This 177-nucleotide RNA was probed chemically with DMS and 2A3. Reactivities are rounded to 0.1 and cut off at 0 and 3. Conditions: 150 mM KOAc, 10 mM MgCl2 and 150 mM bicine (pH 8.5), 24 C. For DMS, 1,535 sequencing reads were counted.
RNA sequence: GGGAACGACUCGAGUAGAGUCGAAAAGAUGAUUAGUUCGCUAAUCAUCAAAGAACGCUGCAACGCGCAGAGAGCGCGCGAGAGCGAGAAUGCGCGUAGAAAAAAGUUACGGGUUCGCCCGUAACAAGGACUGAUAAGAGUUCGCUCUUAUCAGUCCAAAAGAAACAACAACAACAAC
Reactivity to DMS in 0.01 (KOAc 150mM, MgCl2 10mM, bicine 150mM(pH8.5), 24C), signal-to-noise 2, nucleotides 027 to 126: g010a000u000g000a010u000u000a000g020u000u010c230g000c020u000a000a000u000c000a010u010c020a100a130a110g000a100a120c110g000c070u000g000c090a130a050c000g010c000g020c020a030g000a160g000a120g000c030g000c000g010c050g000a140g000a120g000c000g000a050g000a110a140u000g010c000g080c050g000u020a110g000a000a020a070a070a110a150g000u000u000a000c000g000g000g000u000u000c230g010c000c000c010g000u000a000a000c000a140a090
Reactivity to 2A3 in 0.01 (KOAc 150mM, MgCl2 10mM, bicine 150mM(pH8.5), 24C), signal-to-noise 2, nucleotides 027 to 126: g010a010u010g000a000u000u000a000g020u010u070c160g020c150u000a000a000u030c000a000u000c000a000a000a000g070a090a030c060g000c140u130g000c060a040a020c010g010c000g000c040a000g080a010g020a070g220c040g020c000g020c070g190a090g040a020g050c020g030a020g010a020a010u030g000c000g000c020g040u080a060g240a070a120a020a000a010a040g000u020u000a000c030g000g030g000u000u050c190g080c020c010c000g000u000a000a000c000a000a010